[RMDB]
RNA sequence: GGGAACGACUCGAGUAGAGUCGAAAAGGCUUAGCGCAGAUGGGCGCGCGCGCGCCUGAGAUACGGAAGACGUAGACUGCUGUCAUCACACCAAGGAUCAGGUGCAGCACAGCUUUGACGUUUCUACGUACGCCCAUGAUGCUGUUGAGGUAGAUGGGCUGAUAAUAUAUUUCGAUAUAUUAUCAGCAAAAGAAACAACAACAACAAC
Reactivity to DMS in 0.01 (KOAc 150mM, MgCl2 10mM, bicine 150mM(pH8.5), 24C), signal-to-noise 3, nucleotides 027 to 156: g030g010c000u000u010a090g000c020g030c020a070g020a040u000g010g020g030c090g020c070g050c000g030c070g030c260g010c000c010u000g010a120g000a170u000a090c010g000g000a150a160g010a050c010g020u000a050g010a080c090u000g020c020u010g000u000c010a070u010c150a040c010a060c000c010a090a130g000g010a160u010c060a220g000g000u000g000c040a220g070c070a030c000a040g010c010u000u000u000g000a060c010g010u000u000u000c010u000a080c030g010u000a030c010g020c010c000c010a090u000g010a150u000g020c010u000g010u000u010g010a100g000g010u000a050g020a140u010g000g000
Reactivity to 2A3 in 0.01 (KOAc 150mM, MgCl2 10mM, bicine 150mM(pH8.5), 24C), signal-to-noise 7, nucleotides 027 to 156: g020g020c030u100u110a020g000c010g000c010a010g010a030u020g000g000g000c000g010c010g000c000g000c000g000c020g010c000c010u060g030a080g020a040u110a030c080g020g040a060a030g050a020c010g000u010a010g040a090c050u050g010c010u020g020u040c030a070u100c030a030c000a000c020c010a090a070g180g010a120u170c080a090g000g000u010g010c030a020g000c050a010c000a010g000c000u090u040u120g050a020c030g040u020u110u030c030u030a010c010g010u010a070c060g010c000c000c010a010u080g030a040u050g000c060u030g010u070u060g040a070g010g050u110a050g040a130u120g040g050
Overview:
The record gives the reactivity of an RNA of 207 nucleotides to DMS and 2A3. Reactivities are given for positions 27 through 156. Source: RMDB library OK3TST, as collected in RNAgym. The 2A3 profile rests on 8,130 reads. The RNA was probed in 150 mM KOAc, 10 mM MgCl2 and 150 mM bicine (pH 8.5) at 24 C.